Chemical mapping of a 177-nucleotide RNA with 2A3 and DMS.
It was measured as part of the RMDB library OK1LIB.
For 2A3, 10,065 sequencing reads were counted.
For 2A3 the reverse transcriptase was SuperScript II with manganese.
Reactivities are given for positions 27 through 126.
RNA sequence: GGGAACGACUCGAGUAGAGUCGAAAACGAGCGGAUCGAUCUGAUCGCCGAGAGCGCCGUACGGGCCGGUGCGCUGGGCGCCCGGAUGACCGGGGGCGGCUUCGGGGGCGCCGUGAUCGCACUGGUGUAGCAUUUUGAAUUUCGAUUCAAAAUGCUAAAAAGAAACAACAACAACAAC
Reactivity to 2A3 in 0.01 (KOAc 150mM, MgCl2 10mM, bicine 150mM(pH8.5), 24C), signal-to-noise 8, nucleotides 027 to 126: c030g020a040g040c040g070g040a050u060c010g060a080u070c120u210g010a050u030c010g030c060c010g050a060g000a010g040c050g000c020c010g040u120a110c050g030g080g000c000c000g010g010u050g000c010g000c030u100g120g030g000c010g000c000c000c000g040g040a080u080g100a170c010c010g010g010g010g120g100c040g010g000c000u020u020c030g190g020g000g010g020c010g000c010c010g050u070g040a100u160c010g000c010a010c030u020g030g000u050g050
Reactivity to DMS in 0.01 (KOAc 150mM, MgCl2 10mM, bicine 150mM(pH8.5), 24C), signal-to-noise 4, nucleotides 027 to 126: c050g010a150g000c020g000g020a040u010c020g010a100u020c050u030g010a060u010c030g020c030c020g010a080g000a100g010c030g010c020c000g010u010a120c100g010g010g000c000c000g010g010u000g000c020g010c090u020g000g000g000c000g010c000c000c000g010g010a050u010g000a200c000c000g010g000g010g020g010c040g000g010c020u000u000c020g020g020g000g010g000c000g020c020c010g010u020g010a070u020c010g000c010a020c010u010g000g020u000g000